Chemical mapping of a 207-nucleotide RNA with DMS and 2A3.
RNA sequence: GGGAACGACUCGAGUAGAGUCGAAAAACAUGAAUUUUGCAGGUGACACAGUUCAGCCUCUAGCACUCAGCGCCCACCUGGAUGUGGCUUCUAACUGCAGGACGCCCUCCCCCAACAUCCUCUGGACUUUGGCACCCUGGGUGAGAAUUGGGCAGGACUACUACCAGGGAUUCGUCCCUGGUAGUAGAAAAGAAACAACAACAACAAC
Reactivity to DMS in 0.01 (KOAc 150mM, MgCl2 10mM, bicine 150mM(pH8.5), 24C), signal-to-noise 2, nucleotides 027 to 156: a060c080a070u010g000a100a100u010u010u000u000g040c050a040g020g030u030g000a140c060a070c060a050g030u010u000c040a230g050c040c000u000c060u000a100g000c070a050c010u000c020a090g050c060g040c030c000c040a060c070c050u000g020g000a030u000g020u000g010g020c050u000u000c020u010a050a040c040u000g020c040a070g030g050a070c020g000c000c010c110u000c030c020c000c020c000a110a130c030a050u010c020c000u000c030u010g010g020a050c030u000u000u000g010g000c000a030c020c060c040u010g000g030g000u000g020a060g010a070a080u000u000g000g000g020c040a120g030g010a270
Reactivity to 2A3 in 0.01 (KOAc 150mM, MgCl2 10mM, bicine 150mM(pH8.5), 24C), signal-to-noise 2, nucleotides 027 to 156: a000c070a060u180g090a200a120u140u150u160u140g030c010a030g040g070u070g070a040c050a040c070a080g040u040u030c010a020g030c040c020u100c030u110a060g000c000a000c040u020c010a010g050c000g000c010c060c020a050c010c010u000g020g010a020u020g050u090g020g010c050u050u000c000u040a080a100c010u030g030c040a050g000g060a010c040g020c000c000c000u100c000c000c000c000c000a000a010c000a010u050c000c010u030c100u060g020g020a070c000u100u120u120g020g000c020a050c020c000c000u010g010g000g020u010g020a050g040a020a070u100u020g020g050g030c040a020g020g010a010
In probing experiments dimethyl sulfate is read out at A N1 and C N3, which are open when not base-paired. The 2A3 profile rests on 1,029 reads. DMS adducts were read by reverse transcription with MarathonRT.